[RMDB]
RNA sequence: GGGAACGACUCGAGUAGAGUCGAAAAGCUGAUUGUUGCCCAGUUGAUAAUCGAUACGGCCAUCCUGGGGCAGGCGCUUCUCGCCGAUAUCCAGCCGCGCCAUCAGUUUCAGGCGUGAAGCCACGGCACUAGCGUUCUGGUUCGCCAGAACGCUAGUAAAAGAAACAACAACAACAAC
Reactivity to DMS in 0.01 (KOAc 150mM, MgCl2 10mM, bicine 150mM(pH8.5), 24C), signal-to-noise 1, nucleotides 027 to 126: g000c070u020g000a070u000u000g030u010u020g030c050c020c020a160g000u010u000g010a040u010a050a040u000c020g020a140u010a110c100g020g000c040c030a110u000c000c010u010g000g010g000g010c100a100g000g000c070g020c210u000u000c050u010c040g020c050c000g010a110u000a070u000c100c050a120g000c000c020g050c070g020c000c040a070u010c090a110g010u000u000u000c150a140g000g040c050g000u000g010a050a070g000c030c070a110c050g000g010c040
An RNA of 177 nucleotides, treated with DMS and read out base by base. The reactions ran in a buffer of 150 mM KOAc, 10 mM MgCl2 and 150 mM bicine (pH 8.5), at 24 C. The DMS profile rests on 1,013 reads. The data come from the RNA Mapping Database (RMDB), library OK2TST. Values cover nucleotides 27 to 126.